[RMDB]
RNA sequence: GGGAACGACUCGAGUAGAGUCGAAAAGAUAUGGAAACAAUGCUCCGAUAAGCGUGGGUCGGAAACGACCCAACGCUUUUGACGGAGCGUUGUUUCCUAAGUCAAAAGUUCGUGUUCGCACGAACAACAUUAAGCAAGCGUUCGCGCUUGCUUAAUGAAAAGAAACAACAACAACAAC
Reactivity to DMS in 0.01 (KOAc 150mM, MgCl2 10mM, bicine 150mM(pH8.5), 24C), signal-to-noise 3, nucleotides 027 to 126: g000a050u000a300u010g000g000a030a000a000c000a000a000u000g010c000u000c000c000g010a190u020a020a010g010c000g020u000g000g000g000u000c000g020g010a070a060a160c000g010a010c000c000c000a020a010c020g010c000u000u000u000u000g020a250c180g020g000a010g030c010g010u000u000g000u000u000u000c000c000u000a010a080g010u010c020a110a080a140a170g010u000u000c010g030u000g020u010u010c260g020c000a010c000g000a000a030c000a160a200
Reactivity to 2A3 in 0.01 (KOAc 150mM, MgCl2 10mM, bicine 150mM(pH8.5), 24C), signal-to-noise 1, nucleotides 027 to 126: g010a000u050a020u090g000g000a000a000a000c010a010a010u030g000c020u020c010c070g280a170u120a250a000g000c000g000u020g000g010g020u000c000g010g000a080a000a030c000g000a000c000c020c000a000a010c010g000c010u020u040u020u050g040a020c080g000g000a000g010c010g000u000u000g000u000u000u000c000c010u000a000a000g000u000c000a000a000a000a270g000u020u010c030g000u040g080u070u100c300g000c150a020c010g010a010a000c010a000a020